Conditions: 150 mM KOAc, 10 mM MgCl2 and 150 mM bicine (pH 8.5), 24 C. This 177-nucleotide RNA was probed chemically with 2A3 and DMS. It was measured as part of the RMDB library OK2TRN. 2A3 adducts were read by reverse transcription with SuperScript II with manganese.
[RMDB]
RNA sequence: GGGAACGACUCGAGUAGAGUCGAAAACAUGCACAGAAGUUUAUAACACGCCUUUAUAGCUGGUUAUUUGAAAAGUCUGGGCGUGACUACAUCCCUGGCCGCCAGCUGCAGUUUUAUGCCCAGUGCCCUCAUCCACUCAUUUCGAUGAGUGGAUGAGAAAAGAAACAACAACAACAAC
Reactivity to 2A3 in 0.01 (KOAc 150mM, MgCl2 10mM, bicine 150mM(pH8.5), 24C), signal-to-noise 2, nucleotides 027 to 126: c000a010u050g020c030a070c020a070g120a130a000g040u100u050u080a130u040a050a030c030a020c050g030c000c000u130u280u100a200u170a140g010c000u020g010g070u070u060a150u070u150u260g130a090a060a010a010g040u060c050u070g000g010g020c000g010u040g010a000c010u090a040c010a020u060c020c000c000u010g040g010c030c010g050c010c010a000g000c070u020g000c000a000g020u070u070u110u090a040u080g010c000c000c000a070g080u060g130c000c000
Reactivity to DMS in 0.01 (KOAc 150mM, MgCl2 10mM, bicine 150mM(pH8.5), 24C), signal-to-noise 2, nucleotides 027 to 126: c040a060u000g000c030a020c070a040g010a060a090g010u010u010u010a070u010a030a070c020a040c030g000c000c070u010u010u020a080u010a110g010c020u010g000g000u000u000a030u010u000u000g000a070a020a060a110g010u000c010u000g020g000g030c030g030u020g000a100c110u000a100c120a130u000c030c040c000u000g000g020c060c060g010c020c010a050g020c070u000g000c060a030g000u000u000u000u000a080u010g000c040c000c020a090g020u010g000c100c090